[RMDB]
Structure probing data (2A3 and DMS) for a 177-nucleotide construct.
RNA sequence: GGGAACGACUCGAGUAGAGUCGAAAACCGGCCUCAGCGAGGUCCCCUCGGGAGGUGCCUUCCGCGUCACGGAGUGCCGUGACCGGGGGUAACCCUGGCCGGGCACAGGCCCACCUGGGUUAGCCCGUCAUCGGUACACUUUCGAGUGUACCGAUGAAAAAGAAACAACAACAACAAC
Reactivity to 2A3 in 0.01 (KOAc 150mM, MgCl2 10mM, bicine 150mM(pH8.5), 24C), signal-to-noise 8, nucleotides 027 to 126: c010c010g000g020c010c000u070c020a090g150c030g030a020g050g040u230c100c050c000c010u020c010g020g010g010a030g010g010u030g030c000c010u270u130c010c010g040c100g010u020c010a000c010g040g040a190g210u200g240c020c000g010u000g010a000c010c000g010g000g020g000g000u000a010a020c010c000c000u010g040g000c080c120g040g000g000c070a190c050a130g270g020c000c000c010a040c000c020u040g000g020g000u020u040a040g090c000c000c010g010
Reactivity to DMS in 0.01 (KOAc 150mM, MgCl2 10mM, bicine 150mM(pH8.5), 24C), signal-to-noise 3, nucleotides 027 to 126: c040c010g000g000c000c000u020c050a100g020c080g000a020g000g000u030c030c030c020c020u010c010g000g000g010a070g000g030u020g000c040c010u010u040c020c010g020c210g000u010c000a000c000g040g020a300g010u050g000c020c000g020u010g000a010c020c010g000g000g000g010g000u010a030a010c000c000c010u000g010g030c110c100g000g000g040c000a190c220a100g020g000c000c010c020a300c040c050u000g000g000g020u010u010a080g010c010c000c000g000

Conditions: 150 mM KOAc, 10 mM MgCl2 and 150 mM bicine (pH 8.5), 24 C.
It was measured as part of the RMDB libraries RFM100 and RFMREP.
DMS adducts were read by reverse transcription with MarathonRT.
Values cover nucleotides 27 to 126.